[RMDB]
RNA sequence: GGGAACGACUCGAGUAGAGUCGAAAAUACUAUCCUUCCAGAUCUAAAGAACGUCGGCCUAAUCGGUUCUUGGCCUAUUUUGGAACGGGGCAUCAGACCAUAUGCAGUGGCCAUUGAGUAACAGUGAUCCAGCCCGUGCUGUUUUGGAUUCUGAGUCCAAUGGCCCAUAUUUCGAUAUGGGCCAUUGAAAAGAAACAACAACAACAAC
Reactivity to DMS in 0.01 (KOAc 150mM, MgCl2 10mM, bicine 150mM(pH8.5), 24C), signal-to-noise 2, nucleotides 027 to 156: u000a080c040u000a130u000c000c000u000u000c030c020a070g010a070u000c070u010a130a110a080g020a070a080c090g070u000c050g010g010c020c040u010a100a080u000c050g030g050u000u010c050u000u000g030g040c030c040u000a070u000u000u000u000g010g020a030a090c110g010g000g010g030c030a140u000c030a120g010a060c040c020a060u000a070u010g030c120a140g010u010g010g000c030c020a090u000u010g000a170g010u000a090a090c050a030g020u000g000a060u020c050c010a160g000c020c010c070g000u000g000c030u010g000u000u000u000u000g050g020a200u000u000c000u000g030a240g040u000c040